[RMDB]
RNA sequence: GGGAACGACUCGAGUAGAGUCGAAAACAGACCAAGUUCGCUUGGUCUGAAAGAUAGCGGAAAGCACCAGGGAGGGAAGGUGCGGGCCGCAACCACCCAUAAAAAGUACGAUCUUCGGAUCGUACAACCUUGAACAAUACUUCGGUAUUGUUCAAGGAAAAGAAACAACAACAACAAC
Reactivity to DMS in 0.01 (KOAc 150mM, MgCl2 10mM, bicine 150mM(pH8.5), 24C), signal-to-noise 4, nucleotides 027 to 126: c020a010g000a020c000c000a000a000g020u000u020c230g040c000u000u000g000g000u000c000u010g010a020a060a150g000a080u010a150g020c010g000g010a020a030a230g000c000a020c010c010a130g010g010g020a060g020g000g030a180a170g000g000u000g000c010g020g010g010c000c010g000c010a060a060c190c070a130c010c000c010a130u040a030a060a040a070a100g010u000a010c000g000a000u000c000u000u020c190g020g000a010u010c000g010u000a000c000a050a060
Reactivity to 2A3 in 0.01 (KOAc 150mM, MgCl2 10mM, bicine 150mM(pH8.5), 24C), signal-to-noise 9, nucleotides 027 to 126: c010a000g000a000c000c000a010a000g010u030u080c150g020c140u000u000g010g000u000c000u000g000a000a000a000g080a030u160a020g000c000g000g010a030a050a010g010c000a000c010c010a050g070g100g060a150g020g050g030a060a080g030g010u000g000c000g000g050g010c000c010g000c000a000a000c010c020a020c000c010c010a040u230a050a130a010a010a010g000u000a000c000g000a000u000c000u030u060c220g070g000a000u000c000g000u010a000c000a000a010